Structure probing data (DMS and 2A3) for a 207-nucleotide construct. For DMS the reverse transcriptase was MarathonRT. It was measured as part of the RMDB library M2RFPK. For 2A3 the reverse transcriptase was SuperScript II with manganese. The reactions ran in a buffer of 150 mM KOAc, 10 mM MgCl2 and 150 mM bicine (pH 8.5), at 24 C. High DMS reactivity at an A or C suggests that its Watson-Crick edge is free.
RNA sequence: GGGAACGACUCGAGUAGAGUCGAAAAGCUUAAUAACCUGCGCUGAGCCCUUCUCUCCCAGCUUGCCUGUGUCCUAGGGAAUUGGAAGGUCAUCCUUCACAGGAUCGUGUGGAAGUCCUGCUCGGGGUCCAAACAUGGUAAUUCGUUACCAUGUUAAACACAUCGAAAAAUUCGUUUUUCGAUGUGUAAAAGAAACAACAACAACAAC
Reactivity to DMS in 0.01 (KOAc 150mM, MgCl2 10mM, bicine 150mM(pH8.5), 24C), signal-to-noise 2, nucleotides 027 to 156: g030c040u000u000a090a090u010a140a110c010c010u000g010c050g020c080u000g020a120g010c020c020c020u020u010c020u020c110u000c020c010c020a080g020c000u000u010g030c020c030u000g010u030g030u010c050c010u000a140g010g050g030a050a140u000u000g040g000a070a040g020g020u000c070a090u000c000c010u020u000c080a080c040a050g000g000a040u000c060g000u000g040u000g010g010a070a090g000u000c000c010u000g000c030u000c020g010g000g020g020u020c020c040a070a030a020c000a010u000g010g030u010a010a050u000u000c300g030u000u010a000c000c000a040u000g000u000u010a030a100
Reactivity to 2A3 in 0.01 (KOAc 150mM, MgCl2 10mM, bicine 150mM(pH8.5), 24C), signal-to-noise 4, nucleotides 027 to 156: g020c030u100u150a080a040u100a190a190c010c020u050g020c040g020c070u060g030a040g020c020c010c000u030u000c060u010c010u000c000c010c000a030g010c010u050u100g050c030c040u110g000u020g020u080c030c020u040a090g030g020g060a060a080u100u140g060g030a040a020g030g030u060c020a090u080c000c020u050u080c050a040c000a050g030g010a040u060c070g030u060g020u050g150g010a040a020g040u000c010c010u030g000c010u000c000g030g010g010g000u000c020c040a040a010a000c000a000u000g010g000u010a010a020u050u040c100g030u030u010a000c000c000a010u000g000u000u000a000a010